Record summary:
Structure probing data (DMS and 2A3) for a 207-nucleotide construct. Conditions: 150 mM KOAc, 10 mM MgCl2 and 150 mM bicine (pH 8.5), 24 C. It was measured as part of the RMDB library RNAMAK. Reactivities are given for positions 27 through 156.

RNA sequence: GGGAACGACUCGAGUAGAGUCGAAAAGGGGUCAGAACCUUGGAUUUAGUAGCAGAGGCAAGACCUGAAGCCUCCACGGGUCCUGCCGACGAAGCUACUUGUCAGGUUCUGACGGAGGCACCCAAAAUCGUAAGAAUGCUUCGGCAUUCUUACGAAACAUUUCUUUUAGAUUCGUCUAAAAGAAAUGAAAAGAAACAACAACAACAAC
Reactivity to DMS in 0.01 (KOAc 150mM, MgCl2 10mM, bicine 150mM(pH8.5), 24C), signal-to-noise 2, nucleotides 027 to 156: g000g000g020g010u000c010a020g000a030a020c000c010u000u010g060g010a100u000u000u010a010g050u010a030g030c030a060g010a120g010g040c000a030a020g010a060c020c010u030g000a040a160g000c010c010u000c010c000a290c030g010g000g020u000c010c010u000g030c000c000g010a100c160g010a100a220g000c010u000a010c030u000u000g050u000c040a140g010g020u000u000c010u000g010a020c000g010g010a010g100g110c040a130c020c020c010a090a060a090a190u000c010g000u020a010a020g010a030a010u000g010c020u000u010c300g060g000c010a000u000u000c010u000u000a000c000g000a000a080a170
Reactivity to 2A3 in 0.01 (KOAc 150mM, MgCl2 10mM, bicine 150mM(pH8.5), 24C), signal-to-noise 5, nucleotides 027 to 156: g070g000g030g000u010c010a000g010a000a010c030c060u210u300g170g010a060u230u300u190a010g000u000a000g000c010a010g000a000g020g000c000a000a010g000a000c000c010u000g030a060a010g000c000c000u000c000c000a010c010g010g000g000u000c000c000u000g000c010c010g080a110c010g000a010a000g000c000u000a000c000u010u020g020u050c280a030g000g000u000u000c000u000g000a000c000g000g000a000g000g000c000a030c000c000c000a040a060a010a090u050c000g000u000a000a000g000a010a000u010g000c010u100u160c290g070g000c010a000u000u000c000u000u000a000c000g000a000a000a000

For 2A3, 9,487 sequencing reads were counted. For DMS the reverse transcriptase was MarathonRT.